Notes:
The data come from the RNA Mapping Database (RMDB), library OK2TST. This 177-nucleotide RNA was probed chemically with DMS and 2A3. As a SHAPE reagent, 2A3 marks flexible, mostly unpaired nucleotides at the ribose 2'-OH. The RNA was probed in 150 mM KOAc, 10 mM MgCl2 and 150 mM bicine (pH 8.5) at 24 C. The DMS profile rests on 2,169 reads. Reactivities are given for positions 27 through 126.
[RMDB]
RNA sequence: GGGAACGACUCGAGUAGAGUCGAAAAUCUGGCCAAGAAGGGGCCUUUGGGAACCAUUUGGAUUGCUUCCCAUCUUGACCGGAGAUUGAAGCGCAAUCAAGUCUUCGAUACAAACAUCGCGGUGACACUCAAGCACAAAGUUCGCUUUGUGCUUGAGAAAAGAAACAACAACAACAAC
Reactivity to DMS in 0.01 (KOAc 150mM, MgCl2 10mM, bicine 150mM(pH8.5), 24C), signal-to-noise 3, nucleotides 027 to 126: u000c020u000g010g000c000c010a020a030g020a120a070g000g000g000g000c140c070u000u020u000g000g010g020a060a060c040c010a200u010u010u010g010g000a150u010u000g020c120u000u000c010c000c000a080u010c040u020u000g000a020c060c010g030g010a030g000a130u010u000g010a040a040g020c050g000c120a100a120u000c120a090a100g010u000c020u000u000c010g010a050u000a110c150a070a070a110c150a060u000c080g000c110g020g010u000g000a140c150a150
Reactivity to 2A3 in 0.01 (KOAc 150mM, MgCl2 10mM, bicine 150mM(pH8.5), 24C), signal-to-noise 2, nucleotides 027 to 126: u030c000u000g050g000c000c000a000a050g060a040a050g060g030g000g000c000c000u020u070u070g060g040g030a010a040c020c000a060u080u110u220g160g010a150u150u100g010c030u080u040c000c000c000a010u000c040u000u050g030a010c020c020g000g000a020g020a030u020u080g080a100a010g070c020g000c120a040a110u120c060a170a020g000u000c000u050u010c030g020a020u040a170c030a030a160a030c030a050u100c020g010c030g120g000u050g050a010c020a030
DMS adducts were read by reverse transcription with MarathonRT.